An RNA of 177 nucleotides, treated with 2A3 and DMS and read out base by base.
The data come from the RNA Mapping Database (RMDB), library OK2TRN.
For 2A3, 2,153 sequencing reads were counted.
[RMDB]
RNA sequence: GGGAACGACUCGAGUAGAGUCGAAAACGUGCUGGAGCCGCCGGCCUCCGACCCCGAGCUGCAGCCCGCCGAGCGCCCGCUGCCAUCGCCGGGGUCCGGGGAGGGCGCCCCGGUCUUCCUCACGGGGUGAUACAGAACUGUUCGCAGUUCUGUAUCAAAAAGAAACAACAACAACAAC
Reactivity to 2A3 in 0.01 (KOAc 150mM, MgCl2 10mM, bicine 150mM(pH8.5), 24C), signal-to-noise 1, nucleotides 027 to 126: c020g050u100g060c010u010g020g000a030g040c080c020g040c020c040g300g040c000c010u020c000c000g010a010c000c000c000c000g030a080g000c010u040g000c000a010g000c020c060c020g040c030c100g280a140g050c130g020c010c060c050g010c010u000g000c030c030a180u140c090g000c010c000g000g000g000g000u000c020c020g030g000g010g020a010g010g000g010c010g000c010c010c000c000g000g000u020c010u050u000c010c000u020c010a030c020g010g020g040g020
Reactivity to DMS in 0.01 (KOAc 150mM, MgCl2 10mM, bicine 150mM(pH8.5), 24C), signal-to-noise 3, nucleotides 027 to 126: c150g020u010g010c040u000g010g000a010g030c110c070g050c040c030g010g030c040c000u000c010c190g000a040c020c000c010c010g000a200g010c030u010g020c020a020g020c010c030c300g010c010c030g010a130g030c140g050c020c020c140g010c030u000g010c020c180a050u000c070g030c030c010g010g010g010g030u010c030c200g020g000g010g000a040g000g020g020c020g000c010c010c020c000g000g010u000c040u000u000c010c000u000c100a120c090g010g000g000g010